An RNA of 207 nucleotides, treated with 2A3 and read out base by base. Reactivities are rounded to 0.1 and cut off at 0 and 3. Values cover nucleotides 27 to 156.
RNA sequence: GGGAACGACUCGAGUAGAGUCGAAAAAAGGGCAGCUAACCUACAUCGAAUCUUUGCGUAAAACCAAAGGCGAGACGGCAGCAGCAGAUGCGGCGACAAAACUGUUUGCUGAUACGAUGGACAAGCGCCUUAAAGAUAUCGCGGACAGCGCAACGCCGACCUUAGGUUCUUUCGAGAACCUAAGGUCAAAAGAAACAACAACAACAAC
Reactivity to 2A3 in 0.01 (KOAc 150mM, MgCl2 10mM, bicine 150mM(pH8.5), 24C), signal-to-noise 2, nucleotides 027 to 156: a010a020g070g010g000c090a100g000c070u010a060a020c000c000u030a050c020a140u030c010g060a190a050u010c000u090u010u080g000c050g020u140a000a050a000a000c040c060a020a040a000g010g000c110g000a050g000a040c060g050g000c000a000g000c000a000g000c000a010g000a040u020g040c050g060g030c010g140a120c080a020a100a010a040c010u010g020u170u240u120g020c000u000g000a000u040a110c030g050a060u110g000g000a010c060a210a020g010c000g000c120c000u030u050a100a080a000g070a070u060a030u090c020g010c010g000g060a060c060a040g070c040g000c040a060a070c020g000c010c010